[RMDB]
RNA sequence: GGGAACGACUCGAGUAGAGUCGAAAACAACGCUUGCUGGUCGCGGUUGCGCAGGACUUCCCGCCGGACUGUCGAAUCGGUUUCGGCGUCGAUGACGGCAAGCGACUGAUACGUCAGGACGUUCAUCCCGGUUAUCAUUAUUCGUAAUGAUAACCGGAAAAGAAACAACAACAACAAC
Reactivity to DMS in 0.01 (KOAc 150mM, MgCl2 10mM, bicine 150mM(pH8.5), 24C), signal-to-noise 6, nucleotides 027 to 126: c080a120a220c040g020c010u000u000g020c010u000g020g020u000c050g010c040g020g020u000u010g010c050g020c060a120g010g010a190c110u010u000c010c040c000g000c010c000g000g000a010c010u000g020u010c180g010a110a120u010c050g010g020u000u010u000c020g000g010c000g010u000c070g020a060u000g000a200c030g000g010c010a030a040g000c010g010a050c030u010g000a060u000a070c100g010u000c030a050g000g010a140c110g010u000u000c090a150u000c100
Reactivity to 2A3 in 0.01 (KOAc 150mM, MgCl2 10mM, bicine 150mM(pH8.5), 24C), signal-to-noise 8, nucleotides 027 to 126: c030a020a050c020g000c010u020u030g000c010u130g160g070u060c020g020c040g080g100u100u170g070c100g000c100a120g010g140a110c010u040u020c010c000c000g000c000c000g000g000a010c010u040g010u140c150g200a110a150u230c020g070g000u030u100u240c010g010g060c000g010u020c060g080a110u130g010a020c010g000g000c000a010a000g000c000g000a010c000u010g010a010u020a070c160g070u010c030a020g020g080a050c050g020u020u050c040a080u110c040